Chemical mapping of a 177-nucleotide RNA with DMS and 2A3. The DMS profile rests on 2,182 reads. DMS (dimethyl sulfate) methylates the pairing face of unpaired adenines and cytosines. DMS adducts were read by reverse transcription with MarathonRT. It was measured as part of the RMDB library VIROID. Conditions: 150 mM KOAc, 10 mM MgCl2 and 150 mM bicine (pH 8.5), 24 C. For 2A3 the reverse transcriptase was SuperScript II with manganese.

RNA sequence: GGGAACGACUCGAGUAGAGUCGAAAAAAAGCAACGGGGCUAGCAGGUGGGUGUUCCGCCCCCCGAGAGGGAACGAGUGAGGCUUAUCCCGGGGAACUCGACUUAUCGUCCCCACAUAGCAGUUUCCACUUUAGUAGUGGUUCGCCACUACUAAAGUAAAAGAAACAACAACAACAAC
Reactivity to DMS in 0.01 (KOAc 150mM, MgCl2 10mM, bicine 150mM(pH8.5), 24C), signal-to-noise 3, nucleotides 027 to 126: a040a030a070g020c040a080a080c110g020g000g000g000c100u010a090g020c080a090g000g010u010g020g020g020u000g020u010u000c070c030g000c020c010c000c000c010c030g000a070g000a140g020g000g010a060a070c070g000a040g000u000g010a090g000g010c020u010u000a110u000c020c010c020g030g020g000g010a150a040c030u000c020g010a080c150u000u000a120u000c050g000u000c040c000c000c000a070c160a060u000a140g010c120a110g010u000u000u000c000c040
Reactivity to 2A3 in 0.01 (KOAc 150mM, MgCl2 10mM, bicine 150mM(pH8.5), 24C), signal-to-noise 2, nucleotides 027 to 126: a010a010a020g020c020a020a020c040g010g020g020g020c020u020a030g020c000a020g060g030u030g020g010g010u120g070u250u040c030c030g010c020c010c000c020c000c010g040a070g020a040g050g020g010a000a080c020g000a020g040u080g020a030g050g000c010u090u050a040u070c030c020c010g000g010g000g000a040a020c000u030c030g020a040c060u090u140a100u150c030g060u040c010c000c100c010a020c020a040u160a030g120c110a010g010u000u010u020c010c010